[RMDB]
RNA sequence: GGGAACGACUCGAGUAGAGUCGAAAAGAUAUGGAAGCGUCGUGGACAUGCGUGUCGGUCGGAAACGACCGGGCACGCAACAGCCACACGCUUCCUAAGUCAAAGGCCAGUAGUUCGCUACUGGCCAUCAGAGGAAGCAGUUCGCUGCUUCCUCUGAAAAAGAAACAACAACAACAAC
Reactivity to 2A3 in 0.01 (KOAc 150mM, MgCl2 10mM, bicine 150mM(pH8.5), 24C), signal-to-noise 1, nucleotides 027 to 126: g000a000u030a000u060g000g030a020a030g000c020g060u140c210g040u250g000g000a090c100a300u300g000c000g000u000g010u010c020g050g010u000c000g020g030a010a000a000c000g000a020c040c030g020g040g000c020a000c000g000c010a030a010c010a000g020c010c000a000c000a000c020g000c000u010u000c000c000u010a010a020g020u010c010a110a140a000g000g000c030c010a010g000u000a000g000u010u150c300g060c180u020a000c000u010g000g070c010c000a000
Reactivity to DMS in 0.01 (KOAc 150mM, MgCl2 10mM, bicine 150mM(pH8.5), 24C), signal-to-noise 2, nucleotides 027 to 126: g000a030u010a110u010g000g000a010a010g000c010g010u000c300g030u000g000g010a020c120a150u010g010c000g010u000g040u000c000g000g000u000c000g050g000a040a020a020c000g010a000c000c010g040g020g010c000a000c020g010c000a020a010c260a190g000c000c000a000c000a030c000g000c000u000u010c000c000u000a000a030g020u000c010a130a140a170g020g010c000c010a030g040u000a000g010u000u040c220g030c010u000a010c000u000g010g010c000c000a010
The data come from the RNA Mapping Database (RMDB), library TTRDES. Structure probing data (2A3 and DMS) for a 177-nucleotide construct. The reactions ran in a buffer of 150 mM KOAc, 10 mM MgCl2 and 150 mM bicine (pH 8.5), at 24 C. The 2A3 profile rests on 2,222 reads.